[RMDB]
RNA sequence: GGGAACGACUCGAGUAGAGUCGAAAAAUGGCUCUGACAGUGGGAUGCAACGCCGAGAGGCGACGCUAAUCUCCAAACGGAGUCGUAGUUCGGAUUGCGGGCUGAAACCCGCCCGCAUGAAGCUGGAAACAGUAAUGAUGUUCGCAUCAUUACUGUUAAAAGAAACAACAACAACAAC
Reactivity to DMS in 0.01 (KOAc 150mM, MgCl2 10mM, bicine 150mM(pH8.5), 24C), signal-to-noise 9, nucleotides 027 to 126: a050u010g010g000c000u000c000u000g010a080c140a100g020u020g020g000g000a020u000g010c010a060a260c010g010c000c000g010a250g010a250g010g010c000g010a020c300g000c010u010a070a030u000c000u000c000c010a070a150a130c030g010g000a010g010u000c000g020u000a040g010u010u010c050g010g010a120u010u000g000c000g000g000g010c010u000g010a070a090a120c190c100c110g010c000c000c000g010c000a010u000g000a260a120g010c040u000g010g000a300
Reactivity to 2A3 in 0.01 (KOAc 150mM, MgCl2 10mM, bicine 150mM(pH8.5), 24C), signal-to-noise 7, nucleotides 027 to 126: a000u080g000g000c000u010c000u010g040a030c030a070g040u300g100g010g000a010u010g000c000a010a070c000g000c000c000g040a050g010a020g040g010c010g000a010c070g000c010u050a080a020u000c020u000c010c000a030a070a080c010g030g010a000g000u000c000g000u030a070g010u030u140c020g010g010a010u010u020g000c000g000g000g000c010u070g050a130a100a120c020c020c020g000c000c000c000g000c000a000u010g010a010a000g030c030u040g020g040a090
Source: RMDB libraries RFM100 and RFMREP, as collected in RNAgym. This 177-nucleotide RNA was probed chemically with DMS and 2A3. Reactivities are given for positions 27 through 126.